[RMDB]
RNA sequence: GGGAACGACUCGAGUAGAGUCGAAAAGUGAGUGCUGUGUGGAGGUGUGUUCAGGAGGCCACUGGAGCAUAGAGGAAGAGUGCUUGGCCCUGGGGUGAGGUGCCAGGGAAGGUUCCUGCAGGAGAUGCCCUGUUAGCUGGAUUUUAAAAAAAUUAAAAUAUGGCAUACUAUUCGUAGUAUGCCAUAUAAAAGAAACAACAACAACAAC
Reactivity to 2A3 in 0.01 (KOAc 150mM, MgCl2 10mM, bicine 150mM(pH8.5), 24C), signal-to-noise 2, nucleotides 027 to 156: g060u030g040a030g030u030g000c080u040g030u030g020u060g090g050a030g020g020u020g000u000g020u080u070c050a050g000g070a030g000g070c020c020a050c090u050g030g010a020g010c010a010u060a080g040a030g030g040a020a020g030a000g020u070g020c010u030u030g030g020c000c010c020u020g060g000g000g000u040g010a050g020g010u020g060c000c030a010g000g000g010a030a030g030g020u040u050c010c010u040g000c020a020g010g020a080g010a030u040g000c000c020c010u010g010u050u040a010g010c010u000g010g060a110u080u190u300u300a020a060a010a010a010a010a050u200u200a010a210a010
Reactivity to DMS in 0.01 (KOAc 150mM, MgCl2 10mM, bicine 150mM(pH8.5), 24C), signal-to-noise 1, nucleotides 027 to 156: g000u000g010a130g020u000g010c030u000g000u000g020u000g020g000a060g010g050u000g050u010g010u000u000c050a060g030g040a160g050g040c040c040a070c070u000g050g030a030g040c060a130u000a050g010a130g000g000a080a110g000a110g020u000g010c030u020u030g010g030c000c020c000u000g050g020g050g060u000g010a120g030g010u000g020c060c030a050g010g010g010a090a080g000g040u000u000c020c020u000g020c030a120g000g020a170g020a100u000g000c050c020c030u000g010u000u000a110g050c010u000g010g010a170u000u000u000u000a000a000a050a010a070a020a230u000u010a040a090a110